Structure probing data (2A3 and DMS) for a 177-nucleotide construct.
2A3 adducts were read by reverse transcription with SuperScript II with manganese.
RNA sequence: GGGAACGACUCGAGUAGAGUCGAAAAGAUAUGGAAUCGAGGAACUACGUUUAACACUCGGAAACGAGUGGUAGACGCCGAUGAGAUUCCUAAGUCAAACCAUAUCGCUGUUCGCAGCGAUAUGGAAGAUCUGAUACCGGUUCGCCGGUAUCAGAUCAAAAGAAACAACAACAACAAC
Reactivity to 2A3 in 0.01 (KOAc 150mM, MgCl2 10mM, bicine 150mM(pH8.5), 24C), signal-to-noise 1, nucleotides 027 to 126: g010a020u080a030u200g000g000a000a000u030c020g040a150g130g000a150a110c100u170a000c300g010u060u000u000a020a010c000a000c000u000c030g000g030a040a040a010c000g000a000g010u020g000g040u010a000g000a030c000g000c010c020g220a300u280g060a040g000a090u000u000c000c000u000a130a000g090u050c070a060a060a090c010c000a000u000a000u000c000g000c000u010g040u060u090c300g020c180a010g050c010g000a000u000a000u000g000g000a000a000
Reactivity to DMS in 0.01 (KOAc 150mM, MgCl2 10mM, bicine 150mM(pH8.5), 24C), signal-to-noise 1, nucleotides 027 to 126: g000a010u000a300u000g000g010a020a020u010c000g010a210g060g000a130a040c050u020a200c020g000u000u000u000a000a030c000a000c000u000c000g010g000a050a090a200c010g010a080g060u000g000g000u000a020g010a000c000g000c020c060g000a240u030g020a300g000a020u000u000c000c000u000a030a080g010u000c060a040a190a180c000c000a020u000a010u010c000g000c010u000g000u000u000c290g000c000a030g000c000g000a000u000a000u000g000g020a030a050

Values are in units of 0.01, from 0 to 300, in steps of 10. It was measured as part of the RMDB library TTRDEL.